An RNA of 177 nucleotides, treated with 2A3 and DMS and read out base by base.
The RNA was probed in 150 mM KOAc, 10 mM MgCl2 and 150 mM bicine (pH 8.5) at 24 C.
The data come from the RNA Mapping Database (RMDB), libraries RFM100 and RFMREP.
RNA sequence: GGGAACGACUCGAGUAGAGUCGAAAAAGCUUCGACAUUGAUCAGACCUUUUCCAUAGUAGAAGGAGCUUCCCAAAUAAGUCGCCGUACUGGAGAGACGGUUGCGGACUUGUGAAGCUGAAAGGUUCCAUUAUGCUUACUUUCGAGUAAGCAUAAUGAAAAGAAACAACAACAACAAC
Reactivity to 2A3 in 0.01 (KOAc 150mM, MgCl2 10mM, bicine 150mM(pH8.5), 24C), signal-to-noise 9, nucleotides 027 to 126: a000g030c020u040u030c020g060a050c030a130u070u190g040a060u130c040a030g070a100c000c000u020u030u040u020c040c030a090u090a100g120u050a030g060a130a040g040g030a010g000c000u020u010c010c040c000a020a070a000u060a010a000g030u040c020g000c020c000g050u090a160c060u110g090g080a120g010a020g010a080c000g000g010u020u050g050c040g020g020a020c010u010u010g010u020g030a020a010g000c030u040g050a080a060a030g070g000u050u030c020
Reactivity to DMS in 0.01 (KOAc 150mM, MgCl2 10mM, bicine 150mM(pH8.5), 24C), signal-to-noise 9, nucleotides 027 to 126: a060g010c030u000u000c020g010a090c080a130u010u010g010a110u010c100a110g010a100c040c010u000u000u010u000c020c050a120u010a110g010u010a070g010a070a060g000g000a110g010c020u000u000c000c030c010a040a050a050u010a080a130g000u000c080g000c010c010g000u000a070c040u010g020g030a150g000a100g010a030c020g000g010u000u000g020c040g010g010a130c290u000u000g000u000g000a020a020g010c010u000g000a050a070a050g000g010u000u010c070